[RMDB]
RNA sequence: GGGAACGACUCGAGUAGAGUCGAAAAAUUGAGUGUGCAGCGGUGGCGUGGCACAUCUAGCGUAGUUCUCGCCCGCAUCCACAUCCGGUGCAGCAGUCAGACCCAUUAGGGCGAGCAGUGUGGAGCGCUCGGCUCCCUACUUCGGUAGGGAGCCGAGAAAAGAAACAACAACAACAAC
Reactivity to 2A3 in 0.01 (KOAc 150mM, MgCl2 10mM, bicine 150mM(pH8.5), 24C), signal-to-noise 1, nucleotides 027 to 126: a000u140u280g120a040g000u050g000u040g020c010a010g060c050g290g140u240g000g110c160g230u260g020g010c000a000c040a000u080c100u000a000g000c040g000u020a190g080u110u070c000u000c000g010c000c000c000g100c000a110u000c000c040a020c040a070u010c000c050g130g000u000g050c020a020g070c160a000g160u280c000a060g060a170c000c000c000a010u000u120a100g000g000g000c000g000a060g000c000a000g000u010g040u000g070g110a010g000c000g000

Description
The data come from the RNA Mapping Database (RMDB), library OK1LIB. Chemical mapping of a 177-nucleotide RNA with 2A3. For 2A3, 339 sequencing reads were counted.